RNA sequence: GGGAACGACUCGAGUAGAGUCGAAAAAUAAACCACCACCAGCGCGACCUGGUCCACCACGACCUGGUCGGCGGCCUCGCGCGCUCCCGCCACCACCGCGACCACCUCCUCGCGCAGGUACAAAAAACAACCAUAUAUGGUUCGCCAUAUAUGGUUGAAAAGAAACAACAACAACAAC
Reactivity to 2A3 in 0.01 (KOAc 150mM, MgCl2 10mM, bicine 150mM(pH8.5), 24C), signal-to-noise 3, nucleotides 027 to 126: a000u130a040a070a020c020c010a020c000c010a020c010c020a040g030c080g000c000g090a010c010c010u020g010g020u050c030c050a130c010c010a050c140g000a020c010c010u020g020g000u000c010g010g010c000g000g020c010c010u070c040g030c000g000c010g020c030u040c030c010c010g030c020c000a040c010c000a030c010c030g040c020g040a030c000c020a030c010c010u070c000c010u010c000g020c010g000c020a020g020g040u070a040c060a010a140a010a010a000a010
Reactivity to DMS in 0.01 (KOAc 150mM, MgCl2 10mM, bicine 150mM(pH8.5), 24C), signal-to-noise 6, nucleotides 027 to 126: a060u010a060a080a150c030c020a140c080c080a080c040c040a090g010c030g010c010g000a020c030c010u010g000g010u010c020c250a150c160c160a090c150g000a030c030c010u000g000g030u000c020g010g020c040g010g000c040c030u000c070g010c050g020c050g000c040u000c030c010c020g000c030c030a050c040c030a040c070c020g020c040g010a060c050c030a080c050c020u000c020c040u000c040g010c040g030c040a040g010g000u000a060c100a000a040a090a060a050a090